[RMDB]
Structure probing data (DMS and 2A3) for a 177-nucleotide construct. DMS adducts were read by reverse transcription with MarathonRT.

RNA sequence: GGGAACGACUCGAGUAGAGUCGAAAACUGGCGUCCUCUUAGACGUCGUCUCACUGGUACAGACUUCGCAGGGGCCGUUUGGUUGGGUGUAGUAGCAGACGACAUGCAUUGGACCGGAUUGACUAGAGGAUGCGCCUGGAUUCGUCUGGGUGUAUCCAAAAGAAACAACAACAACAAC
Reactivity to DMS in 0.01 (KOAc 150mM, MgCl2 10mM, bicine 150mM(pH8.5), 24C), signal-to-noise 9, nucleotides 027 to 126: c080u010g010g010c050g010u000c000c070u000c120u010u010a100g010a080c060g020u000c020g010u000c020u000c080a130c100u000g010g010u000a060c090a070g000a070c040u000u000c060g010c070a070g000g000g000g010c040c030g010u000u000u010g010g010u000u000g000g010g010u000g010u000a050g010u000a050g020c170a050g000a060c050g010a040c060a060u000g010c050a080u000u000g000g010a080c040c030g000g000a110u000u000g010a100c050u000a050g000a300
Reactivity to 2A3 in 0.01 (KOAc 150mM, MgCl2 10mM, bicine 150mM(pH8.5), 24C), signal-to-noise 9, nucleotides 027 to 126: c010u020g040g000c020g010u010c010c030u070c060u040u160a040g000a040c020g010u010c010g040u000c020u010c020a090c050u070g040g000u060a030c020a050g050a080c000u050u030c080g000c040a030g030g000g030g000c010c020g020u030u100u100g040g000u050u060g030g030g040u060g020u040a150g040u020a020g030c050a010g010a030c010g010a010c010a030u070g000c010a030u020u060g020g000a010c010c000g020g030a070u060u100g050a060c010u010a020g010a020
The reactions ran in a buffer of 150 mM KOAc, 10 mM MgCl2 and 150 mM bicine (pH 8.5), at 24 C.
DMS (dimethyl sulfate) methylates the pairing face of unpaired adenines and cytosines.
For 2A3 the reverse transcriptase was SuperScript II with manganese.